[RMDB]
RNA sequence: GGGAACGACUCGAGUAGAGUCGAAAAAGUCUGGUUCACGUUUCACUGAGACCAAUAACUUCGGCUUUGUGGCCUUGGAUAUUAUGUCCACUCUGCCCGAAGAUGCCGGAACUUAUACAUGCCGCGCAGUGUGUAACGGGUUCGCCCGUUACACACUAAAAGAAACAACAACAACAAC
Reactivity to 2A3 in 0.01 (KOAc 150mM, MgCl2 10mM, bicine 150mM(pH8.5), 24C), signal-to-noise 1, nucleotides 027 to 126: a000g060u040c020u030g020g010u090u040c070a020c070g000u010u010u120c180a210c120u110g020a010g030a100c020c040a050a060u100a070a030c010u000u010c000g040g000c000u000u000u010g010u020g000g000c030c000u050u050g070g030a070u050a120u300u110a080u150g020u020c000c000a000c000u000c010u010g030c000c000c000g010a000a020g010a020u070g050c000c010g000g040a060a070c020u060u030a060u050a130c090a040u110g020c000c010g110c010g000c090
Reactivity to DMS in 0.01 (KOAc 150mM, MgCl2 10mM, bicine 150mM(pH8.5), 24C), signal-to-noise 2, nucleotides 027 to 126: a080g010u000c050u000g000g000u000u010c060a080c080g010u000u000u020c070a110c150u000g010a090g040a070c040c080a120a080u000a080a100c030u000u000c000g010g010c000u010u000u000g010u000g010g010c070c050u030u010g020g020a130u000a060u040u010a090u000g010u000c000c010a060c040u010c040u000g000c150c020c030g010a010a020g020a110u010g010c020c010g030g010a030a050c090u020u010a080u010a080c200a050u000g000c020c010g000c130g030c060
An RNA of 177 nucleotides, treated with 2A3 and DMS and read out base by base. For 2A3, 1,661 sequencing reads were counted. The DMS profile rests on 1,849 reads. The RNA was probed in 150 mM KOAc, 10 mM MgCl2 and 150 mM bicine (pH 8.5) at 24 C. 2A3 adducts were read by reverse transcription with SuperScript II with manganese.